[RMDB]
Source information: Structure probing data (DMS and 2A3) for a 170-nucleotide construct. Conditions: 150 mM KOAc, 10 mM MgCl2 and 150 mM bicine (pH 8.5), 24 C. DMS adducts were read by reverse transcription with MarathonRT. Reactivities are given for positions 27 through 129.
RNA sequence: GGGAACGACUCGAGUAGAGUCGAAAACUCGUCUCGGAUUGGCUCAUUCUCAGGUCGGGCGAGGGUCCUCAGUUCUCUCUAUUCUUUCUUUUUGAAAGAGGAGACUGCUGGACCAAACGCCCGAACCAUCGGCGUGUGUUCGCACACGCCAAAAGAAACAACAACAACAAC
Reactivity to DMS in 0.01 (KOAc 150mM, MgCl2 10mM, bicine 150mM(pH8.5), 24C), signal-to-noise 3, nucleotides 027 to 129: c040u020c010g010u000c010u020c050g020g050a060u040u020g050g050c060u010c050a070u020u030c020u000c010a170g010g040u010c070g000g000g000c020g030a180g070g010g000u000c000c000u050c030a030g000u060u010c070u000c020u020c090u080a190u060u000c010u010u040u000c040u060u070u100u020u110g020a000a000a000g000a080g000g000a020g000a010c010u020g000c000u000g000g030a020c000c000a030a090a030c130g010c010c000c000g020a030a020c050c000a000u040c070
Reactivity to 2A3 in 0.01 (KOAc 150mM, MgCl2 10mM, bicine 150mM(pH8.5), 24C), signal-to-noise 5, nucleotides 027 to 129: c000u010c020g100u060c010u000c010g040g050a110u020u060g020g000c020u020c030a050u120u000c060u050c060a060g000g010u010c000g020g010g020c000g000a060g000g000g010u000c010c000u000c000a050g000u300u110c000u000c030u000c030u090a260u190u000c020u040u010u000c030u060u240u110u100u250g000a010a010a000g000a000g000g000a010g000a000c010u000g020c040u000g000g000a000c000c000a030a150a020c000g000c000c010c020g000a030a030c000c000a090u120c060